[RMDB]
RNA sequence: GGGAACGACUCGAGUAGAGUCGAAAACAGACAAGGAAUAGUGCCUGUGGAAAGCAGAGCCUUCAGUAUCUGUAGACACAGCAGCUUUAUACUAUAGCUCAGAUGCUAGGGUCAUCAGGGUAAUCCUCCCAUGGAUGAAGAAUUGUAAGUAUUGGGCCAUAUGGAACUAUUUCGAUAGUUCCAUAUGAAAAGAAACAACAACAACAAC
Reactivity to 2A3 in 0.01 (KOAc 150mM, MgCl2 10mM, bicine 150mM(pH8.5), 24C), signal-to-noise 6, nucleotides 027 to 156: c050a010g100a020c020a030a010g050g030a050a050u040a050g040u040g040c020c010u050g010u050g040g060a140a070a040g000c030a010g030a010g030c020c030u110u090c100a030g010u070a110u040c000u010g070u160a010g070a030c050a000c010a060g060c020a010g010c010u080u190u160a180u110a090c110u060a040u110a140g010c000u010c020a010g000a090u050g010c020u030a020g050g010g010u030c020a040u040c010a010g020g000g040u050a050a060u040c010c020u050c020c020c000a060u090g070g010a020u040g030a030a050g030a040a070u120u120g030u110a050a060g000u010a070u060u100g000g020g000c000
Reactivity to DMS in 0.01 (KOAc 150mM, MgCl2 10mM, bicine 150mM(pH8.5), 24C), signal-to-noise 3, nucleotides 027 to 156: c050a120g010a060c030a060a040g000g010a080a100u000a060g020u000g020c050c030u010g020u000g010g000a080a130a200g020c040a070g000a130g000c020c020u010u000c120a080g050u000a040u000c000u010g020u000a070g030a230c020a060c030a060g020c020a050g000c150u000u000u000a050u000a100c020u000a080u000a030g010c000u000c030a080g010a070u000g010c000u010a050g010g010g010u000c050a090u000c050a090g030g030g000u000a060a120u000c040c020u000c030c000c020a160u010g030g010a050u000g000a060a090g000a070a110u000u000g010u010a020a080g010u000a110u000u000g010g010g020c090
Source information:
Chemical mapping of a 207-nucleotide RNA with 2A3 and DMS. For 2A3 the reverse transcriptase was SuperScript II with manganese. Reactivities are rounded to 0.1 and cut off at 0 and 3. For DMS, 7,217 sequencing reads were counted. The data come from the RNA Mapping Database (RMDB), library OK3TST. Conditions: 150 mM KOAc, 10 mM MgCl2 and 150 mM bicine (pH 8.5), 24 C. 2A3 is a SHAPE reagent: it acylates the 2'-hydroxyl of flexible nucleotides of all four kinds.